[RMDB]
RNA sequence: GGGAACGACUCGAGUAGAGUCGAAAAGAGCCCCACCGCGGCUAAUGCAAGAGGCCAAAAAAUGUUUGGAGGAAGAAAAACAAAGGCAGGAAGUGGCGGCGGCCUGACGGUGCGUGUGUGUCUGCAGAUCCAUUGCCCAUUUCGAUGGGCAAUGGAUAAAAGAAACAACAACAACAAC
Reactivity to DMS in 0.01 (KOAc 150mM, MgCl2 10mM, bicine 150mM(pH8.5), 24C), signal-to-noise 1, nucleotides 027 to 126: g050a200g000c000c000c000c000a060c080c090g020c030g010g010c010u000a010a260u060g000c090a080a130g040a180g020g000c010c090a000a040a070a150a250a110u000g000u010u010u010g000g000a070g000g030a080a180g010a030a140a020a050a000c010a080a130a220g000g010c000a100g000g000a130a040g000u000g040g050c000g000g060c180g000g090c060c020u020g010a030c090g000g000u000g010c150g010u030g030u000g000u000g000u040c010u020g030c230a090g030
Reactivity to 2A3 in 0.01 (KOAc 150mM, MgCl2 10mM, bicine 150mM(pH8.5), 24C), signal-to-noise 1, nucleotides 027 to 126: g030a030g030c000c030c000c000a020c000c080g000c070g000g000c000u100a020a080u150g040c010a000a060g050a120g140g030c000c100a010a020a010a010a010a010u120g060u050u020u020g060g000a060g040g020a030a070g000a040a130a000a000a000c070a000a020a000g060g000c090a000g050g010a180a040g120u140g030g020c000g000g000c000g000g000c000c000u080g020a100c000g000g000u030g000c110g000u160g010u000g000u000g010u040c030u100g010c020a020g010